[RMDB]
RNA sequence: GGGAACGACUCGAGUAGAGUCGAAAAUGGGCGAGUGGCUACGCGGUUCGGAGGAGUUCGGCGACCUGGCUAAAACGAUCUGCUACCUGGGCAACACUGGCAAAGAGCAUCCAGAUUGGCGAGAACUUUGUUACCAGAUACCAACUAAAUCAAAUAGCUUACAGCUAGCUUUCGAGCUAGCUGUAAGAAAAGAAACAACAACAACAAC
Reactivity to 2A3 in 0.01 (KOAc 150mM, MgCl2 10mM, bicine 150mM(pH8.5), 24C), signal-to-noise 1, nucleotides 027 to 156: u080g000g000g030c050g020a000g010u150g110g000c050u030a070c050g010c030g000g030u070u050c070g020g000a030g070g010a020g000u020u030c050g010g040c010g010a020c000c030u010g060g010c030u080a070a070a000a000c050g010a030u000c000u010g000c000u040a100c010c010u010g000g000g000c000a080a030c050a020c090u020g000g000c000a080a000a000g050a040g030c000a040u000c000c000a040g050a300u150u030g020g030c000g020a050g020a020a020c000u030u050u020g040u070u050a060c020c000a020g010a050u100a040c050c000a010a080c090u110a080a070a130u090c090a040a040a110u250a050g090